[RMDB]
RNA sequence: GGGAACGACUCGAGUAGAGUCGAAAAGCGCCAGCCUUGCCAACAUGGUGCCACGUGCAUGCCCGCUGGCGAGUAUGAGUUCCAGUGCCUGUGUCGAGAUGGAUUCAAAGGUGGGAAAGCCUGCCCAGGGCACCGGAGGGGAGGGGCACAGGUGGUAGUGACCGUACGCAUUCGUGCGUACGGUCACAAAAGAAACAACAACAACAAC
Reactivity to 2A3 in 0.01 (KOAc 150mM, MgCl2 10mM, bicine 150mM(pH8.5), 24C), signal-to-noise 1, nucleotides 027 to 156: g080c000g050c020c020a010g010c000c020u070u010g120c100c020a100a090c050a230u080g040g000u070g100c070c000a080c100g120u120g010c000a010u080g010c000c000c000g000c010u010g000g040c000g000a030g050u100a180u150g100a020g060u040u070c040c010a000g030u020g180c000c040u090g010u000g000u000c000g000a020g010a240u140g040g010a020u110u080c070a060a130a010g080g020u150g020g040g050a000a220a100g060c010c020u030g010c000c030c000a040g030g040g000c040a000c020c020g020g000a070g040g000g000g000a040g050g040g000g000c000a000c000a050g000g010u020g030g110u150a070
The record gives the reactivity of an RNA of 207 nucleotides to 2A3. For 2A3, 519 sequencing reads were counted. For 2A3 the reverse transcriptase was SuperScript II with manganese.